[RMDB]
RNA sequence: GGGAACGACUCGAGUAGAGUCGAAAACAUCGCUAAUGUGCUACUAUCAUCCUUCACGGAAGUUGGCAUAUGGUGAGGUGCUCUUUCUAGAACGAUCCAAUGACGUGACAGAUGGGAUCAAGCUUCAUCCCCUGCUCACUUUCGAGUGAGCAGGGGAAAAAGAAACAACAACAACAAC
Reactivity to DMS in 0.01 (KOAc 150mM, MgCl2 10mM, bicine 150mM(pH8.5), 24C), signal-to-noise 1, nucleotides 027 to 126: c040a110u020c020g080c030u000a070a080u010g040u000g020c000u020a030c080u020a210u000c110a090u000c020c020u000u050c200a180c130g010g000a050a080g040u000u020g010g020c020a010u000a010u000g000g000u000g010a110g000g030u000g020c030u000c010u000u000u000c020u000a030g000a030a160c260g030a020u000c020c150a090a190u000g000a070c170g010u000g010a060c130a090g000a030u010g000g000g020a060u000c030a150a190g000c020u000u000c050a150
Reactivity to 2A3 in 0.01 (KOAc 150mM, MgCl2 10mM, bicine 150mM(pH8.5), 24C), signal-to-noise 1, nucleotides 027 to 126: c030a080u080c030g000c010u060a240a080u050g030u060g090c010u000a030c000u000a060u290c010a060u000c060c020u150u180c160a000c080g010g010a030a030g000u030u080g060g030c030a020u040a020u070g000g000u030g020a020g010g000u100g050c030u000c000u050u110u020c000u010a010g010a080a070c010g050a030u000c020c020a120a160u120g070a020c110g020u030g030a030c000a000g090a020u080g030g010g010a000u030c040a020a020g000c050u020u050c030a050

About this RNA:
Chemical mapping of a 177-nucleotide RNA with DMS and 2A3. The RNA was probed in 150 mM KOAc, 10 mM MgCl2 and 150 mM bicine (pH 8.5) at 24 C. For 2A3, 770 sequencing reads were counted. For DMS, 621 sequencing reads were counted. DMS adducts were read by reverse transcription with MarathonRT. Reactivities are given for positions 27 through 126.